[RMDB]
RNA sequence: GGGAACGACUCGAGUAGAGUCGAAAACAGGUGUGAGCCAUUGCGCCCAGCCAGAAAAUUGUUUUUUCAAAUUCUCAUUCUGUUAACGUGGUUUUUAUAAGUCAUUAUAAGUUUUAGCUUUCAAAUCAAUGACAUUCUCAGUAUAUACUCUCCACCAGCUCAUUAUUAGGUUCGCCUAAUAAUGAGCAAAAGAAACAACAACAACAAC
Reactivity to 2A3 in 0.01 (KOAc 150mM, MgCl2 10mM, bicine 150mM(pH8.5), 24C), signal-to-noise 3, nucleotides 027 to 156: c010a040g050g020u050g050u020g040a030g000c000c040a150u130u290g010c080g020c020c000c010a000g030c020c010a060g090a040a090a000a050u160u060g000u050u020u040u070u050u090c050a090a140a040u110u020c030u000c010a050u180u030c040u060g110u200u140a110a060c030g020u020g040g030u050u080u000u050u080a120u100a100a030g000u010c010a000u020u110a090u080a150a140g020u020u090u080u280a050g010c010u000u060u140c070a060a060a080u150c060a020a020u020g000a000c000a030u140u010c050u040c080a010g050u020a010u000a010u000a200c030u050c000u030c090c000a020c040c010a020